[RMDB]
RNA sequence: GGGAACGACUCGAGUAGAGUCGAAAACAAAACCCGGUUCGCCGGGUUUUGAAAAAACCUUUGUGUCCAGCUAGGAGGACCACUGUCCCAUUGGGACAGGUGGUUUCCUUGGACCUGGACACUCUGGUAAAAAGGGUCGAUGUUCGCAUCGACCCAAGUCAUAGGUCAAGUUCGCUUGACCUAUGACAAAAGAAACAACAACAACAAC
Reactivity to 2A3 in 0.01 (KOAc 150mM, MgCl2 10mM, bicine 150mM(pH8.5), 24C), signal-to-noise 1, nucleotides 027 to 156: c000a030a010a030a000c100c020c090g110g020u070u010c180g050c070c050g030g000g000u080u000u000u060g050a030a000a000a000a000a000c000c020u000u000u000g000u020g000u000c000c000a000g000c100u140a030g050g000a040g010g010a020c000c000a000c000u020g010u000c010c080c110a300u300u300g000g000g000a010c050a130g000g120u000g000g000u010u040u030c000c000u000u040g050g080a030c030c040u000g000g010a000c000a010c000u000c000u020g000g030u100a150a150a090a080a040g000g000g000u000c040g000a010u010g080u080u050c300g020c160a000u020c000g010a000c010c010c000a000a000